[RMDB]
RNA sequence: GGGAACGACUCGAGUAGAGUCGAAAAAAGGAUUUUCAAGUGCGCUACCUGCCGGGAACAACAAUCUAGGAAAAGUAAUUGUGACAGAAAUGCCUGCUGUUAGUUUUAUGCUACAAACAUUGCCGCCCUAAACUGGGCGGUUCGCCGCCCAGUUUAGAAAAGAAACAACAACAACAAC
Reactivity to DMS in 0.01 (KOAc 150mM, MgCl2 10mM, bicine 150mM(pH8.5), 24C), signal-to-noise 1, nucleotides 027 to 126: a130a120g030g010a080u010u000u000u010c020a080a080g020u010g000c070g020c030u020a090c080c020u000g010c070c060g000g000g000a090a060c040a070a080c080a040a070u000c070u000a130g010g010a070a040a080a040g010u030a020a080u010u010g010u000g030a050c040a060g000a110a070a080u010g010c030c010u000g030c030u000g020u010u010a020g010u000u000u000u000a110u030g030c050u000a040c120a070a050a070c060a040u000u010g000c000c030g020c120c070
An RNA of 177 nucleotides, treated with DMS and read out base by base. Conditions: 150 mM KOAc, 10 mM MgCl2 and 150 mM bicine (pH 8.5), 24 C. DMS adducts were read by reverse transcription with MarathonRT. The DMS profile rests on 812 reads.